This 177-nucleotide RNA was probed chemically with 2A3 and DMS.
For DMS the reverse transcriptase was MarathonRT.
It was measured as part of the RMDB library OK2TRN.
RNA sequence: GGGAACGACUCGAGUAGAGUCGAAAACGCUCCAAGCUGGGCUGUGUGCCGUUCAGCCCGACCGCUGCGCCUUAUCCGGUAACUAUCGUCUUGAGUCCAACCCGGUAAAGUAGGACAGGUGCCGGCAGUCCCGGAAUAUAUUCGUAUAUUCCGGGACAAAAGAAACAACAACAACAAC
Reactivity to 2A3 in 0.01 (KOAc 150mM, MgCl2 10mM, bicine 150mM(pH8.5), 24C), signal-to-noise 2, nucleotides 027 to 126: c020g070c000u000c060c000a070a000g020c060u110g000g010g030c010u000g040u010g040u090g100c010c030g020u070u040c010a010g000c000c000c030g010a030c050c020g000c060u060g020c010g040c020c010u090u080a080u070c020c010g080g000u020a060a040c040u030a090u130c030g130u000c090u080u140g070a050g070u040c030c020a030a030c090c010c020g010g010u090a080a070a050g070u090a030g010g040a000c000a050g050g010u000g000c040c000g060g000c030a040
Reactivity to DMS in 0.01 (KOAc 150mM, MgCl2 10mM, bicine 150mM(pH8.5), 24C), signal-to-noise 3, nucleotides 027 to 126: c120g020c060u000c040c030a100a120g030c080u010g010g000g000c000u000g000u010g010u010g030c070c090g000u000u000c030a050g010c000c010c000g000a040c080c040g000c060u000g020c060g010c030c030u000u000a120u010c030c010g010g010u010a060a070c060u000a040u010c050g010u010c050u000u010g000a170g010u000c030c050a070a210c080c020c010g010g000u010a050a050a120g020u010a090g010g000a040c170a070g010g010u000g010c040c030g010g020c280a120